Description: The record gives the reactivity of an RNA of 177 nucleotides to DMS and 2A3. For DMS the reverse transcriptase was MarathonRT. Values cover nucleotides 27 to 126. Conditions: 150 mM KOAc, 10 mM MgCl2 and 150 mM bicine (pH 8.5), 24 C. Source: RMDB library OK1LIB, as collected in RNAgym.
[RMDB]
RNA sequence: GGGAACGACUCGAGUAGAGUCGAAAAAGAUGGAUCGUGCUUGUGUUGAUGAGAAGGCAUUGCGUUUGAACGAUCACAUUAAAAUCACACGAGACUUUUUGCCUGCUGACACUUUACUUCCUGAAGGGCUAGCGGUUGUAUUCGUACAACCGCUAGCAAAAGAAACAACAACAACAAC
Reactivity to DMS in 0.01 (KOAc 150mM, MgCl2 10mM, bicine 150mM(pH8.5), 24C), signal-to-noise 1, nucleotides 027 to 126: a040g000a140u000g000g000a150u000c000g000u010g000c060u040u050g000u000g020u010u000g020a150u040g000a230g010a120a000g000g000c020a080u000u030g000c010g000u010u080u000g040a120a050c000g020a090u000c030a030c020a070u000u000a050a040a000a080u020c020a120c040a050c040g000a030g000a180c030u000u000u000u000u060g000c040c000u000g000c010u020g050a040c150a030c000u030u000u000a040c110u000u040c000c020u000g000a020a120g000g070
Reactivity to 2A3 in 0.01 (KOAc 150mM, MgCl2 10mM, bicine 150mM(pH8.5), 24C), signal-to-noise 3, nucleotides 027 to 126: a000g110a050u140g000g010a020u020c000g020u030g090c060u040u010g040u030g010u050u150g060a100u060g020a030g060a210a030g180g030c000a020u020u100g040c030g040u100u140u040g010a080a010c050g000a010u020c050a050c000a120u120u220a100a010a050a070u120c030a030c010a010c090g110a050g090a200c060u040u010u010u100u190g010c020c000u010g000c010u080g030a010c010a000c110u030u080u100a040c020u030u000c010c000u030g050a060a040g070g020